An RNA of 177 nucleotides, treated with DMS and read out base by base. Conditions: 150 mM KOAc, 10 mM MgCl2 and 150 mM bicine (pH 8.5), 24 C. It was measured as part of the RMDB library OK2TRN. For DMS the reverse transcriptase was MarathonRT.
RNA sequence: GGGAACGACUCGAGUAGAGUCGAAAACUGGGUCAUCCAGAUCAUUUAAUCAUGAAAAAAACAUUGUCAGAUAAAAAAGGCAACAUCCCUCCUUUGAAACAUCUUUUCAUAAUGAUAGAUCCGGGUGCUAUCAGUACGGGUUCGCCCGUACUGAUAGAAAAGAAACAACAACAACAAC
Reactivity to DMS in 0.01 (KOAc 150mM, MgCl2 10mM, bicine 150mM(pH8.5), 24C), signal-to-noise 1, nucleotides 027 to 126: c010u000g000g000g000u000c000a040u010c000c000a070g000a030u000c000a100u030u000u030a130a050u010c040a040u000g000a000a000a030a040a100a080a080c080a060u000u000g010u010c070a080g020a130u000a010a040a070a070a080a080g000g000c280a050a000c120a070u010c070c000c010u010c040c070u000u000u000g000a090a090a050c190a040u000c020u000u000u000u010c030a000u000a110a040u000g010a050u000a180g010a020u000c010c020g010g020g060u000g010